[RMDB]
RNA sequence: GGGAACGACUCGAGUAGAGUCGAAAAAGCGGACGACUACCACCGCGUUGCGGCGGGGCACGCGCGCGAGCGGGCGCAUGCAGAGUCGGGCUUGCGCACGCAGAAGCUGCGUGAAGAGGAGAUGCGCCUAAACCGCCAGUUUCGACUGGCGGUUUAGAAAAGAAACAACAACAACAAC
Reactivity to DMS in 0.01 (KOAc 150mM, MgCl2 10mM, bicine 150mM(pH8.5), 24C), signal-to-noise 1, nucleotides 027 to 126: a050g020c050g000g020a140c060g010a060c070u010a140c050c030a080c040c010g010c010g020u000u020g030c040g050g000c030g010g010g000g020c030a010c040g020c000g050c050g010c140g050a240g000c010g000g010g010c000g000c030a010u000g010c010a090g000a190g000u000c110g000g000g000c010u000u000g010c020g000c000a020c010g000c000a060g010a140a130g010c010u010g030c010g040u000g010a090a080g000a110g020g000a080g000a090u000g010c080g010c070